RNA sequence: GGGAACGACUCGAGUAGAGUCGAAAACGGGGGCACGUGCACCAUUUCAGUGCAGGUGAGGGUCUGCACAGGAGGAAACCUGCUUGGGGGCCGCCGUCGCCCCUUGUCCCCCUGCAACGAGGAGGUGGAUAUAUGUGAUCUUCGGAUCACAUAUAUCAAAAGAAACAACAACAACAAC
Reactivity to DMS in 0.01 (KOAc 150mM, MgCl2 10mM, bicine 150mM(pH8.5), 24C), signal-to-noise 9, nucleotides 027 to 126: c130g000g010g010g010g020c020a020c030g010u010g030c020a130c020c030a110u010u010u010c070a060g020u000g000c010a020g010g010u000g000a200g010g010g010u010c020u000g010c150a080c130a080g000g000a090g000g000a110a200a100c020c010u000g000c070u010u000g000g000g000g000g000c080c040g030c020c040g010u000c140g010c010c000c000c010u000u000g000u000c010c000c000c030c020u000g000c050a050a060c080g000a060g000g000a070g010g020u000g010
Reactivity to 2A3 in 0.01 (KOAc 150mM, MgCl2 10mM, bicine 150mM(pH8.5), 24C), signal-to-noise 6, nucleotides 027 to 126: c010g000g000g000g000g000c000a000c020g090u190g010c010a010c020c000a040u070u150u110c040a030g040u020g050c000a000g020g010u040g060a100g050g120g050u010c010u050g020c080a070c050a130g040g030a030g010g070a060a050a020c000c010u020g000c040u070u040g050g000g000g010g000c030c030g010c010c000g010u030c080g010c000c000c000c000u000u030g000u000c000c000c000c000c000u020g030c030a100a090c080g040a050g050g020a040g040g070u150g090